[RMDB]
RNA sequence: GGGAACGACUCGAGUAGAGUCGAAAAGAUAUGGAUAAAGAGGGAGCACCUCUCGGAAACGAGAGAAGUGCUUUGAUCUCUGUCCUAAGUCAAAAUCCACCGUAUCCCUUCGGGGAUACGGUGGAAAGGAAUAGAACUACUUCGGUAGUUCUAUUCCAAAAGAAACAACAACAACAAC
Reactivity to 2A3 in 0.01 (KOAc 150mM, MgCl2 10mM, bicine 150mM(pH8.5), 24C), signal-to-noise 2, nucleotides 027 to 126: g010a000u040a020u060g000g020a020u160a300a300a000g010a020g010g000g010a010g000c000a000c010c010u000c000u000c000g030g050a050a010a000c000g010a010g000a020g030a290a160g000u010g000c000u160u000u010g020a020u010c000u000c000u010g020u000c000c000u010a030a020g020u000c030a040a000a010a270u000c000c000a000c020c010g000u010a000u020c060c000c000u010u120c300g130g030g040g000a000u000a000c000g000g000u000g010g020a010a000a010
Reactivity to DMS in 0.01 (KOAc 150mM, MgCl2 10mM, bicine 150mM(pH8.5), 24C), signal-to-noise 2, nucleotides 027 to 126: g000a010u010a270u000g000g010a010u000a040a050a020g000a010g010g000g000a000g020c000a010c010c000u000c000u000c000g000g000a070a060a110c000g010a020g010a010g000a090a100g020u000g000c000u000u000u010g010a130u000c000u010c010u000g000u010c000c000u000a010a150g010u010c030a050a050a090a160u000c000c000a000c000c000g020u000a010u000c000c000c000u010u010c210g040g000g000g000a010u000a020c000g000g000u010g000g000a000a000a080